This 177-nucleotide RNA was probed chemically with DMS and 2A3.
[RMDB]
RNA sequence: GGGAACGACUCGAGUAGAGUCGAAAACUGAUAUGCUUCGGCAUAUCAGAAAAUAACGUGCAAAAAGAUCAGGAAACUGAAAACUGCAGCACUAGCAGAAAAAAACAGACGUCUUCGGACGUCUGAACAAUGUCAUCAACUUCGGUUGAUGACAUUGAAAAGAAACAACAACAACAAC
Reactivity to DMS in 0.01 (KOAc 150mM, MgCl2 10mM, bicine 150mM(pH8.5), 24C), signal-to-noise 2, nucleotides 027 to 126: c000u000g010a000u000a000u000g030c000u000u000c160g040g020c000a000u000a000u000c000a030g010a070a030a130a080u010a080a130c130g010u000g010c000a050a030a100a100a000g000a080u000c020a010g000g000a170a110a200c020u000g000a000a050a080a080c020u000g000c220a140g000c030a000c020u000a050g000c100a100g000a000a000a000a010a110a070a300c010a020g000a030c000g000u000c000u000u010c290g000g010a000c010g000u010c010u000g000a040a110
Reactivity to 2A3 in 0.01 (KOAc 150mM, MgCl2 10mM, bicine 150mM(pH8.5), 24C), signal-to-noise 2, nucleotides 027 to 126: c000u020g000a000u000a000u000g010c000u050u080c210g110g010c000a000u000a000u010c000a010g000a030a050a000a000u100a030a040c040g010u010g000c070a030a030a030a030a030g010a040u060c030a030g020g080a120a050a080c020u000g020a100a040a040a130c020u050g050c020a050g000c010a010c020u050a040g070c090a040g230a080a140a020a000a010a010a010c000a010g000a010c000g030u020c000u020u090c280g090g010a000c000g010u010c000u000g000a000a010
For DMS the reverse transcriptase was MarathonRT.
The data come from the RNA Mapping Database (RMDB), library M2PK50.
Values cover nucleotides 27 to 126.
The 2A3 profile rests on 1,333 reads.